[RMDB]
RNA sequence: GGGAACGACUCGAGUAGAGUCGAAAAGGUAGGCAACCAUGUCAGCAUCUGUUAGACCGUAGUAUUCCUUAAGCGCCUUCUUAGCGUCAGCAUCAGCGGUUUGCAAAACAUUCUUUGCAAUAUUGAUGCGGUCCUUUAGCUCAUCUGCGCUAACAGAAAAUGGUCAGAGAUUCGUCUCUGACCAUUUAAAAGAAACAACAACAACAAC
Reactivity to 2A3 in 0.01 (KOAc 150mM, MgCl2 10mM, bicine 150mM(pH8.5), 24C), signal-to-noise 3, nucleotides 027 to 156: g060g020u060a020g050g000c050a070a030c030c030a100u090g080u100c080a050g000c010a110u010c010u000g050u020u000a020g000a050c070c030g000u030a000g000u010a120u060u080c000c000u010u020a070a050g030c010g030c020c020u120u100c070u140u210a030g030c030g030u010c040a010g010c000a020u000c000a010g060c060g280g090u020u010u020g030c000a000a020a020a040c070a210u270u080c040u040u000u040g000c000a000a000u040a030u110u020g000a000u000g010c000g040g030u300c010c000u070u070u120a040g010c030u050c120a070u030c030u020g000c020g000c010u000a000a000c010a010g020a020
Reactivity to DMS in 0.01 (KOAc 150mM, MgCl2 10mM, bicine 150mM(pH8.5), 24C), signal-to-noise 3, nucleotides 027 to 156: g040g020u000a030g000g020c010a100a060c080c050a120u020g000u000c030a160g010c040a130u000c040u000g000u000u000a050g000a060c080c020g010u010a060g030u000a110u000u000c040c020u000u010a080a100g020c050g030c000c030u000u000c090u000u000a040g020c030g020u000c030a070g010c000a020u000c010a060g040c210g010g020u000u000u010g000c010a000a010a030a200c150a200u000u010c120u010u010u010g000c000a050a030u010a100u020u010g000a020u010g020c000g020g010u000c050c020u000u020u000a100g020c070u000c050a110u000c010u000g020c060g000c030u010a040a060c030a040g020a050
Chemical mapping of a 207-nucleotide RNA with 2A3 and DMS. For 2A3, 1,755 sequencing reads were counted. The RNA was probed in 150 mM KOAc, 10 mM MgCl2 and 150 mM bicine (pH 8.5) at 24 C.